RNA sequence: GGGAACGACUCGAGUAGAGUCGAAAACUACUAGUAAGCGAAGAAUGAUACAGGAUGAAAAAAACAUAUUAUGAGAUUUUUCAGGAUGGAUUCUUUUAGGUAUCUAUCGAAACCAUUCUGAUGAUCAUAGUGUGAGUAUAUUCGUAUACUCACACUAAAAAGAAACAACAACAACAAC
Reactivity to DMS in 0.01 (KOAc 150mM, MgCl2 10mM, bicine 150mM(pH8.5), 24C), signal-to-noise 6, nucleotides 027 to 126: c030u000a090c100u010a090g010u020a040a080g010c040g000a090a100g000a080a050u000g010a070u000a040c070a080g000g010a090u010g000a000a010a050a070a070a070a090c060a060u030a050u020u010a090u030g000a120g000a030u000u000u020u020u000c010a010g010g010a000u000g000g000a090u000u000c010u010u010u000u010a010g010g020u040a050u050c010u000a010u000c120g010a010a020a050c020c000a000u000u000c000u000g000a010u000g000a010u000c010a200
Reactivity to 2A3 in 0.01 (KOAc 150mM, MgCl2 10mM, bicine 150mM(pH8.5), 24C), signal-to-noise 9, nucleotides 027 to 126: c000u070a010c010u020a020g110u120a110a060g060c060g050a060a020g050a130a140u150g050a050u080a090c060a050g090g080a080u130g150a030a040a020a020a020a070a030c090a050u200a050u200u190a090u200g100a100g000a080u020u050u050u110u030c000a000g000g010a000u000g010g010a020u020u000c030u020u120u040u040a030g080g020u180a110u150c020u010a010u030c030g000a010a000a010c000c000a000u000u000c000u000g000a000u010g000a000u010c020a040